The record gives the reactivity of an RNA of 177 nucleotides to 2A3 and DMS.
Source: RMDB library RFMREP, as collected in RNAgym.
For 2A3 the reverse transcriptase was SuperScript II with manganese.
RNA sequence: GGGAACGACUCGAGUAGAGUCGAAAAAACGCUUAAUUAUGGACCUUGGCACUGGGAGAAUUCACAGUGGAUCGUACCAUAUCGUUUCUGUGGAUCUUUUCGUGCCAUCGUUCAGAUUUUACCAAAAUCUCGACAAUAUGUUCGCAUAUUGUCGAGAAAAAGAAACAACAACAACAAC
Reactivity to 2A3 in 0.01 (KOAc 150mM, MgCl2 10mM, bicine 150mM(pH8.5), 24C), signal-to-noise 1, nucleotides 027 to 126: a000a000c060g000c050u110u090a020a030u130u100a150u250g000g010a000c000c000u000u000g000g000c000a010c030u060g060g000g010a000g060a100a120u010u000c000a020c000a000g020u070g040g170a050u060c030g050u090a150c040c030a120u100a050u210c040g030u070u170u000c000u020g000u030g000g000a000u000c000u000u040u040u080c010g000u010g010c030c000a000u010c000g000u010u030c010a000g000a020u100u090u080u090a100c020c030a010a000a000a200
Reactivity to DMS in 0.01 (KOAc 150mM, MgCl2 10mM, bicine 150mM(pH8.5), 24C), signal-to-noise 1, nucleotides 027 to 126: a110a020c220g030c150u000u000a060a040u010u000a100u000g010g010a000c000c030u000u000g000g010c000a000c000u020g020g010g000a000g000a060a010u000u000c000a000c000a030g010u010g020g000a060u000c150g010u000a110c170c160a070u020a030u000c020g020u020u000u000c000u000g020u020g010g000a040u000c020u020u000u000u020c160g030u000g000c020c000a000u000c120g010u000u000c010a010g000a030u000u000u000u000a170c040c060a100a080a090a150